[RMDB]
The record gives the reactivity of an RNA of 207 nucleotides to DMS and 2A3. For DMS the reverse transcriptase was MarathonRT. The reactions ran in a buffer of 150 mM KOAc, 10 mM MgCl2 and 150 mM bicine (pH 8.5), at 24 C. It was measured as part of the RMDB library OK3TST. Reactivities are rounded to 0.1 and cut off at 0 and 3.
RNA sequence: GGGAACGACUCGAGUAGAGUCGAAAACACUUUAAGGAAUAAUUAUGCCGCUUUAUGAUUAUAAAUGUCAAUCCAAAGACUGCGCAAAAGAAUACGAAAAAAUCAAGAAAAUUUCUGAAAGAGAUACUGAUGUAUGUCCUGAUUGUCAUCGGAUUGCGUUACUUACGAAAUUCGUUUCGUAAGUAACAAAAGAAACAACAACAACAAC
Reactivity to DMS in 0.01 (KOAc 150mM, MgCl2 10mM, bicine 150mM(pH8.5), 24C), signal-to-noise 1, nucleotides 027 to 156: c040a110c060u000u000u010a090a110g030g000a150a070u000a080a130u000u010a100u000g000c020c020g010c100u000u010u010a010u020g040a090u030u000a120u000a060a060a040u000g020u020c010a000a080u010c040c060a030a090a170g020a030c020u010g020c060g030c100a060a130a140a060g000a120a180u000a220c060g020a000a010a080a120a110a060u000c030a020a080g000a040a070a110a090u010u000u000c000u020g010a040a080a120g000a130g000a050u010a020c060u000g070a110u000g020u010a030u000g000u000c020c040u000g000a070u010u000g010u000c030a100u000c000g020g010a140u000u000g020c160
Reactivity to 2A3 in 0.01 (KOAc 150mM, MgCl2 10mM, bicine 150mM(pH8.5), 24C), signal-to-noise 3, nucleotides 027 to 156: c030a010c010u160u160u210a120a100g060g050a070a110u130a150a060u200u110a060u210g010c020c030g030c070u090u120u100a090u100g050a080u070u180a140u190a200a160a120u150g010u050c010a010a010u000c020c020a010a020a040g020a030c030u120g000c050g000c080a000a080a100a000g030a100a060u120a090c030g050a150a020a020a030a020a020u100c040a050a020g110a040a100a110a040u070u120u000c050u080g090a130a110a050g070a020g020a010u070a090c040u060g080a100u100g040u070a010u090g060u020c010c030u070g000a140u010u110g030u010c020a030u040c050g050g000a060u030u040g040c020